[RMDB]
RNA sequence: GGGAACGACUCGAGUAGAGUCGAAAAAGUCCGGAGUACGCUCCGGACAUGCUAGGAAUGGUGGCUGAGAUGAAGAGCAGGAUUUCAGUCAUUGUUUCUAGUAGUAGUCACCGGUACGCCGGUGACAGAUGCGACAGUAGUUCGCUACUGUCGCAUCAAAAGAAACAACAACAACAAC
Reactivity to 2A3 in 0.01 (KOAc 150mM, MgCl2 10mM, bicine 150mM(pH8.5), 24C), signal-to-noise 6, nucleotides 027 to 126: a000g010u000c000c000g000g000a000g010u050a040c250g020c120u000c000c000g000g000a000c000a000u020g000c010u000a000g000g010a010a010u010g020g000u000g000g000c000u010g000a010g010a010u090g130a120a150g060a060g150c100a080g090g130a020u000u010u010c000a000g000u000c000a010u000u020g000u000u010u000c000u000a000g000u000a020g030u040a020g000u000c000a000c000c010g020g000u100a080c290g030c030c000g000g000u000g000a000c000a000
Reactivity to DMS in 0.01 (KOAc 150mM, MgCl2 10mM, bicine 150mM(pH8.5), 24C), signal-to-noise 1, nucleotides 027 to 126: a050g000u000c000c000g000g010a000g100u000a080c220g040c000u000c020c000g010g000a000c000a020u040g010c000u050a010g000g000a000a000u000g010g060u000g000g000c000u000g000a010g000a010u000g000a130a130g000a070g000c150a100g010g040a060u000u000u000c010a000g010u000c020a000u000u000g000u000u000u010c000u000a010g000u010a040g040u010a060g020u000c000a000c000c030g030g000u030a190c250g030c000c000g080g000u000g000a000c000a000
Source: RMDB libraries RFM100 and RFMREP, as collected in RNAgym. This 177-nucleotide RNA was probed chemically with 2A3 and DMS. The reactions ran in a buffer of 150 mM KOAc, 10 mM MgCl2 and 150 mM bicine (pH 8.5), at 24 C.